[RMDB]
RNA sequence: GGGAACGACUCGAGUAGAGUCGAAAAGGGGACGUUCUGGAUUCGACAGGAAUAGGUCGAGCUUAAGUGGCGAGCCGAGGUGGCGAACUCGUUAAAACGCCAUCGCCAAUAACUGGCAAAGAAAACAACAACUUCGCAUUAGCUGCCUAAGCUAGCAGAUUGAGGUUGCGUUCGCGCAACCUCAAUCAAAAGAAACAACAACAACAAC
Reactivity to 2A3 in 0.01 (KOAc 150mM, MgCl2 10mM, bicine 150mM(pH8.5), 24C), signal-to-noise 1, nucleotides 027 to 156: g020g000g000g000a020c040g010u060u010c040u010g150g010a220u060u040c000g010a000c010a020g200g040a120a000u040a070g070g000u000c050g030a010g040c020u030u080a040a020g030u020g070g000c040g020a000g040c000c000g020a080g000g000u030g020g000c000g020a050a050c040u030c110g080u130u120a070a100a070a010c010g000c020c010a020u000c050g000c000c000a080a080u140a240a020c140u050g000g000c000a070a060a030g060a010a090a010a000c070a010a000c020a030a050c050u060u090c110g000c030a110u070u070a000g000c020u060g060c000c030u020a020a000g000c010u040a040g000c010a020
An RNA of 207 nucleotides, treated with 2A3 and read out base by base.
It was measured as part of the RMDB library ARCHII.
The 2A3 profile rests on 578 reads.